Conditions: 150 mM KOAc, 10 mM MgCl2 and 150 mM bicine (pH 8.5), 24 C. Chemical mapping of a 177-nucleotide RNA with DMS and 2A3. For DMS, 1,756 sequencing reads were counted. Values cover nucleotides 27 to 126. 2A3 adducts were read by reverse transcription with SuperScript II with manganese.

RNA sequence: GGGAACGACUCGAGUAGAGUCGAAAAGAUAUGGACUUCGAAGAACUACACAUCCGAAGAACUCGGAAACGAGGGAGGAUGGUAGGGAGAAGUCCUAAGUCAAAAGGGACAGCUUCGGCUGUCCCAACGAACUGUUGUAGUUCGCUACAACAGUUCGAAAAGAAACAACAACAACAAC
Reactivity to DMS in 0.01 (KOAc 150mM, MgCl2 10mM, bicine 150mM(pH8.5), 24C), signal-to-noise 2, nucleotides 027 to 126: g000a030u000a300u000g000g000a000c000u000u000c000g020a120a140g020a080a230c000u000a000c010a090c010a000u010c000c010g000a090a160g000a120a230c000u000c000g000g000a110a050a180c000g000a000g000g000g020a070g000g010a000u000g000g000u000a010g030g010g010a110g020a010a000g010u000c000c000u000a010a050g000u000c030a070a060a120a190g000g030g010a010c000a010g010c010u000u010c190g020g030c010u000g010u000c000c000c000a000a040
Reactivity to 2A3 in 0.01 (KOAc 150mM, MgCl2 10mM, bicine 150mM(pH8.5), 24C), signal-to-noise 2, nucleotides 027 to 126: g030a020u060a080u190g000g000a000c010u040u010c040g180a300a060g050a120a030c000u070a010c300a000c020a080u000c000c000g140a300a050g000a090a040c000u010c000g000g060a100a090a040c010g000a010g050g000g010a020g030g000a010u000g010g000u020a000g000g000g010a060g000a000a000g000u000c000c000u010a020a010g050u000c000a000a000a150a120g020g000g000a010c010a010g000c070u110u130c300g170g000c030u020g000u000c030c000c020a000a000